[RMDB]
An RNA of 177 nucleotides, treated with DMS and read out base by base. The RNA was probed in 150 mM KOAc, 10 mM MgCl2 and 150 mM bicine (pH 8.5) at 24 C. Reactivities are given for positions 27 through 126. Source: RMDB library OK2TRN, as collected in RNAgym.

RNA sequence: GGGAACGACUCGAGUAGAGUCGAAAAGACAAAGUUUGCGUGCGCCCCGGCCUUGACACGUAAAUAACCUCAGAAAGCGUCUUCUCGCCAGUGCGUUAAACCAAUGUUUGUAGUUAUGACUAAUGCGAACCAGUGCUUCAUUCGUGAAGCACUGGUUAAAAGAAACAACAACAACAAC
Reactivity to DMS in 0.01 (KOAc 150mM, MgCl2 10mM, bicine 150mM(pH8.5), 24C), signal-to-noise 1, nucleotides 027 to 126: g040a080c080a130a050a130g030u000u000u000g010c070g050u010g040c080g020c060c060c010c060g040g030c010c060u010u000g040a090c080a040c090g020u000a020a000a050u000a130a130c050c060u020c080a060g000a030a120a060g000c130g000u000c040u000u000c040u000c060g060c090c010a020g040u000g000c030g010u000u010a070a040a180c060c060a100a070u010g020u000u000u040g050u010a060g000u010u000a080u010g000a100c060u010a050a040u000g030c200g000